[RMDB]
RNA sequence: GGGAACGACUCGAGUAGAGUCGAAAAACUACGCUUUAGCAGCUUAAUAACCUGCUUGCGUGCUCCUGCUUUGCAUCGCCCAUGUGCCAAGUUAGGGGCUCAACUUUAGUGGGCUACGCUGUCUAGUCUCCGCCUGAGGCUAGCUGAAGAAGACAAUAGGUAUAUGCGAGUUCGCUCGCAUAUACCUAAAAGAAACAACAACAACAAC
Reactivity to 2A3 in 0.01 (KOAc 150mM, MgCl2 10mM, bicine 150mM(pH8.5), 24C), signal-to-noise 1, nucleotides 027 to 156: a000c040u040a000c000g010c000u170u170u050a010g000c000a000g000c000u000u050a020a000u070a050a030c000c000u010g000c000u000u040g000c000g000u000g000c000u000c000c000u000g000c000u000u000u030g000c000a010u020c030g000c000c000c000a000u000g000u010g000c000c000a060a000g020u220u260a010g140g000g000g000c030u000c080a060a030c000u110u080u060a030g000u000g000g000g120c010u020a020c070g020c000u030g060u220c010u030a000g010u020c000u000c050c060g200c080c140u150g000a000g000g000c000u000a010g000c010u000g000a020a030g020a000a000g150a000c060a080a230u050